[RMDB]
RNA sequence: GGGAACGACUCGAGUAGAGUCGAAAAGCCGCAAGCGCAAGCCCCGCUUCUAAGUCACCACGCGGUUCUGGAAAGGCACUUGCCUCUGCACUUUUCUAUAUUGUUCAGCUGACAAAGUAGUAUUUUACAUACCCUGCAGGUUCGCCUGCAGGGUAUGAAAAGAAACAACAACAACAAC
Reactivity to DMS in 0.01 (KOAc 150mM, MgCl2 10mM, bicine 150mM(pH8.5), 24C), signal-to-noise 2, nucleotides 027 to 126: g000c040c020g010c120a060a090g000c200g030c040a050a070g000c130c060c030c060g010c120u000u000c110u000a060a110g000u010c080a060c030c050a090c150g000c080g000g000u000u000c080u000g030g000a040a080a120g000g010c060a040c060u010u000g020c080c030u020c040u000g010c010a100c030u000u000u020u010c050u010a030u000a110u000u000g010u000u020c060a160g010c120u020g010a040c100a030a060a220g010u000a080g010u000a070u010u000u000u010a200